[RMDB]
An RNA of 177 nucleotides, treated with DMS and 2A3 and read out base by base.
For DMS, 525 sequencing reads were counted.
For 2A3, 708 sequencing reads were counted.
For DMS the reverse transcriptase was MarathonRT.
RNA sequence: GGGAACGACUCGAGUAGAGUCGAAAAUUACGAUGCCCGCAGCCUUCGCUGACGCAUUAAGCGACUGCGCCAGUUCAAACACAUUAAUCUCGCCGGUGAUGUCGAGAUAAUGCACCCGGCAAUGCAAGUCACUCCGAUAUUUCGAUAUCGGAGUGACAAAAGAAACAACAACAACAAC
Reactivity to DMS in 0.01 (KOAc 150mM, MgCl2 10mM, bicine 150mM(pH8.5), 24C), signal-to-noise 1, nucleotides 027 to 126: u000u010a120c130g000a130u000g010c040c040c010g090c070a060g010c190c080u030u000c060g050c010u000g010a080c120g020c000a090u000u000a130a020g040c040g000a090c200u000g000c020g000c010c020a120g000u020u000c140a080a100a100c110a070c040a040u010u010a070a100u000c040u010c050g000c050c060g050g040u030g010a060u010g000u000c000g000a030g000a020u030a000a010u020g000c030a300c080c040c010g040g010c030a100a090u000g020c050a120a120
Reactivity to 2A3 in 0.01 (KOAc 150mM, MgCl2 10mM, bicine 150mM(pH8.5), 24C), signal-to-noise 1, nucleotides 027 to 126: u120u040a080c130g010a020u110g030c000c000c000g060c020a040g070c010c050u040u020c030g000c000u010g050a060c050g040c050a010u020u150a070a070g000c020g030a030c050u020g000c090g050c050c100a040g050u110u120c080a020a190a000c040a000c040a050u000u110a030a160u000c030u030c070g030c010c000g140g060u200g030a230u140g070u100c010g000a020g020a140u070a010a010u010g000c030a010c000c000c040g020g000c000a000a020u060g010c030a060a110